[RMDB]
RNA sequence: GGGAACGACUCGAGUAGAGUCGAAAACGACCGUAUGGAGAAAAUUUCCGACAAGAGGUGAUCCACUGAGGGUUUGCGGAAAAAUCACCUCCAGAGGACCCCUUCAGCGAACGGAAGAGACUGGAAGAACGAGUAGGGUUCGCCCUACUCAAAAGAAACAACAACAACAAC
Reactivity to DMS in 0.01 (KOAc 150mM, MgCl2 10mM, bicine 150mM(pH8.5), 24C), signal-to-noise 9, nucleotides 027 to 129: c130g000a150c070c040g000u060a070u050g040g020a070g020a100a090a080a120u000u000u000c000c010g040a130c260a060a060g000a060g020g010u020g000a060u000c060c060a140c070u050g030a120g020g030g040u010u020u030g040c100g000g000a010a050a060a120a090u040c090a010c000c000u000c010c030a040g020a150g040g010a090c120c040c020c020u040u020c070a080g030c040g000a070a060c040g000g000a000a000g010a040g020a030c060u050g020g020a070a060g030a050a050c170
Reactivity to 2A3 in 0.01 (KOAc 150mM, MgCl2 10mM, bicine 150mM(pH8.5), 24C), signal-to-noise 9, nucleotides 027 to 129: c050g040a020c010c010g080u120a070u130g050g020a020g050a030a060a020a060u060u050u020c020c020g060a070c080a080a040g030a030g080g040u070g020a080u040c030c020a050c100u120g050a170g040g090g020u080u100u140g070c050g000g040a050a040a010a020a040u060c020a050c020c010u000c020c000a020g020a040g020g010a040c000c000c000c010u050u070c020a020g020c010g040a040a030c010g000g020a030a010g020a010g030a050c040u070g010g030a070a050g010a080a010c060
This 170-nucleotide RNA was probed chemically with DMS and 2A3. For 2A3, 36,818 sequencing reads were counted. Conditions: 150 mM KOAc, 10 mM MgCl2 and 150 mM bicine (pH 8.5), 24 C. 2A3 adducts were read by reverse transcription with SuperScript II with manganese.